[RMDB]
The record gives the reactivity of an RNA of 207 nucleotides to 2A3. Values cover nucleotides 27 to 156. It was measured as part of the RMDB library OK3TST. 2A3 is a SHAPE reagent: it acylates the 2'-hydroxyl of flexible nucleotides of all four kinds.

RNA sequence: GGGAACGACUCGAGUAGAGUCGAAAACACAAGUUGCCAUUCAAGUUAGCAGCGCAGUUAGAGCACACAUUGCGCCAGCGCGCGCAGAGCAGCUUCAAGUUCAUUGCUUAGAGAGGCAGCAUUGCCAAGAGAGUUGCUUAGAGGCCACAAGCACAAGGUCAGAUUAUGUCUUCGGACAUAAUCUGACAAAAGAAACAACAACAACAAC
Reactivity to 2A3 in 0.01 (KOAc 150mM, MgCl2 10mM, bicine 150mM(pH8.5), 24C), signal-to-noise 1, nucleotides 027 to 156: c190a020c030a060a010g020u070u050g120c060c000a020u050u180c120a250a060g060u000u110a010g040c100a000g000c000g010c070a010g020u060u050a060g060a050g070c010a030c030a000c040a160u080u100g020c000g000c020c010a100g020c130g030c020g000c000g000c040a000g020a010g030c000a000g000c000u040u070c070a100a040g020u020u060c120a120u240u190g020c030u040u100a040g040a000g010a040g100g000c000a000g010c070a070u000u140g000c050c010a010a030g080a000g030a000g060u030u020g000c000u040u040a040g000a040g160g030c000c030a080c000a020a010g100c080a020c000a030a000g180